RNA sequence: GGGAACGACUCGAGUAGAGUCGAAAAGAUAUGGACUGUGGGAGCUGCACUUCGGAAACGAAGUGUCCAGCGUUGAUCACACAUGUCCUAAGUCAAACUGAACCAGCUGUUCGCAGCUGGUUCAGAACAUUCCAGUAUGGUUCGCCAUACUGGAAUGAAAAGAAACAACAACAACAAC
Reactivity to DMS in 0.01 (KOAc 150mM, MgCl2 10mM, bicine 150mM(pH8.5), 24C), signal-to-noise 7, nucleotides 027 to 126: g000a030u000a250u010g000g010a010c010u000g000u000g010g000g010a060g030c000u000g010c000a000c000u000u000c000g020g000a060a050a150c000g020a010a010g020u000g000u010c240c040a000g040c000g010u010u010g010a190u010c070a080c000a030c110a040u010g010u000c000c010u000a030a090g000u000c020a100a130a260c010u000g000a010a000c010c000a000g010c010u000g010u000u020c240g020c000a000g010c010u000g000g000u000u000c000a000g000a070a180
Reactivity to 2A3 in 0.01 (KOAc 150mM, MgCl2 10mM, bicine 150mM(pH8.5), 24C), signal-to-noise 5, nucleotides 027 to 126: g010a010u050a020u090g000g010a000c020u030g000u010g020g020g030a070g000c000u000g020c000a000c000u010u000c010g000g010a030a030a020c010g000a010a020g000u010g020u060c050c020a010g000c020g080u190u090g060a080u040c010a000c010a000c020a100u300g000u000c000c000u010a060a010g030u010c040a070a080a140c010u010g000a000a000c000c000a010g000c020u020g040u110u160c300g020c190a000g000c000u000g000g000u000u000c000a000g000a000a000
The record gives the reactivity of an RNA of 177 nucleotides to DMS and 2A3. For DMS, 11,727 sequencing reads were counted. The RNA was probed in 150 mM KOAc, 10 mM MgCl2 and 150 mM bicine (pH 8.5) at 24 C. 2A3 adducts were read by reverse transcription with SuperScript II with manganese. For DMS the reverse transcriptase was MarathonRT.